[RMDB]
RNA sequence: GGGAACGACUCGAGUAGAGUCGAAAAGCCUCCUCGCUUCCAUAGAAAGGGGACGGCGCAGAUCGCAAGUGCUACAACCGAGCGGUGGUAUCUGUCAAACUAAGCAGCCACUGCACAUCAAUUGACUAAACGAUGCCGAUCUUCGGAUCGGCAUCAACAUAUGUACAUAGUUCGCUAUGUACAUAUGAAAAGAAACAACAACAACAAC
Reactivity to DMS in 0.01 (KOAc 150mM, MgCl2 10mM, bicine 150mM(pH8.5), 24C), signal-to-noise 2, nucleotides 027 to 156: g000c000c010u000c010c000u000c000g000c090u000u010c040c190a170u000a130g000a080a080a230g020g030g020g030a040c050g040g060c000g020c060a030g000a040u010c040g020c020a080a050g020u000g010c020u000a130c070a070a260c090c080g000a150g030c020g040g060u000g010g040u000a030u000c030u000g030u000c010a040a090a280c120u010a060a090g010c020a060g000c020c010a050c000u000g010c010a190c140a070u010c040a090a010u010u000g020a180c090u000a060a070a150c070g000a020u000g010c000c000g000a020u000c000u000u010c300g040g020a020u010c000g050g000c000a000u000c000a040a100
Reactivity to 2A3 in 0.01 (KOAc 150mM, MgCl2 10mM, bicine 150mM(pH8.5), 24C), signal-to-noise 4, nucleotides 027 to 156: g010c000c010u010c000c000u010c040g080c080u130u020c070c070a250u130a190g090a040a090a040g000g030g010g000a030c160g000g000c030g000c010a010g010a010u010c010g000c010a010a000g010u010g000c030u090a170c050a140a050c050c080g110a050g010c000g010g000u010g010g000u010a020u010c020u010g050u060c080a020a070a070c060u090a070a030g010c000a010g020c000c000a000c000u020g040c010a030c010a050u220c080a050a170u120u220g060a070c050u210a080a100a010c090g000a000u010g000c000c000g000a010u000c000u030u080c180g060g010a000u000c000g000g030c000a000u000c000a000a000